[RMDB]
RNA sequence: GGGAACGACUCGAGUAGAGUCGAAAAGCUGGUCGGGUAUGCAUUCCGGGUGGUCGAGUAAUGGCGACGUUUCCGGGGUUCCAGGUGCCGAAGCCUGUGGAGGGGAUCGUUGCCGGCAUCACGCCAAGAUCUUUUCUAAUUUCGAUUAGAAAAGAUCAAAAGAAACAACAACAACAAC
Reactivity to 2A3 in 0.01 (KOAc 150mM, MgCl2 10mM, bicine 150mM(pH8.5), 24C), signal-to-noise 5, nucleotides 027 to 126: g030c030u050g010g070u070c030g030g000g010u090a070u140g050c040a060u130u000c030c000g020g030g020u060g010g030u070c050g030a020g050u130a090a150u150g020g000c000g010a010c010g010u000u050u020c010c010g050g020g050g010u030u050c020c010a010g010g010u050g070c090c080g100a070a040g020c000c010u070g060u180g060g050a090g010g040g000g000a020u030c010g010u020u030g000c000c000g000g010c010a020u060c030a000c060g000c020c000a010a030
Reactivity to DMS in 0.01 (KOAc 150mM, MgCl2 10mM, bicine 150mM(pH8.5), 24C), signal-to-noise 7, nucleotides 027 to 126: g020c060u000g010g020u000c060g010g010g000u000a050u000g010c100a130u000u000c070c060g020g000g030u000g000g010u000c040g000a170g010u010a090a190u020g010g010c010g010a030c020g010u000u000u010c010c010g010g000g020g010u000u000c040c020a040g010g010u010g010c060c180g000a100a190g000c010c010u000g010u000g020g000a110g020g010g000g000a020u000c030g010u000u000g010c020c010g010g000c120a070u000c100a070c140g000c040c060a090a150

An RNA of 177 nucleotides, treated with 2A3 and DMS and read out base by base. For 2A3, 10,417 sequencing reads were counted. Conditions: 150 mM KOAc, 10 mM MgCl2 and 150 mM bicine (pH 8.5), 24 C. For DMS, 14,430 sequencing reads were counted. It was measured as part of the RMDB library OK2TST.